This 177-nucleotide RNA was probed chemically with DMS. The RNA was probed in 150 mM KOAc, 10 mM MgCl2 and 150 mM bicine (pH 8.5) at 24 C.
[RMDB]
RNA sequence: GGGAACGACUCGAGUAGAGUCGAAAAACUCGAUGCUAUACGUAGCAUCGAGAUUGUCUCUAUGGGGACGCAUCAAAUAAUAAAUCAGUUUUAGAAUAAAAGGCGCAGCGUUCUGCGCCUUUUUUAACUACCUUUUCGUUUUCGAACGAAAAGGUAGAAAAGAAACAACAACAACAAC
Reactivity to DMS in 0.01 (KOAc 150mM, MgCl2 10mM, bicine 150mM(pH8.5), 24C), signal-to-noise 1, nucleotides 027 to 126: a020c000u000c000g000a000u050g000c030u000a050u040a200c270g050u000a040g090c000a020u040c000g020a020g000a050u000u030g020u020c010u000c000u000a260u070g000g000g000g000a030c020g020c030a100u040c090a070a040a060u000a130a100u130a130a070a050u050c110a220g000u030u050u050u050a070g020a010a120u000a010a000a000a030g000g010c000g010c040a010g020c220g020u030u000c000u030g060c010g000c000c000u000u000u040u000u000u000a030a050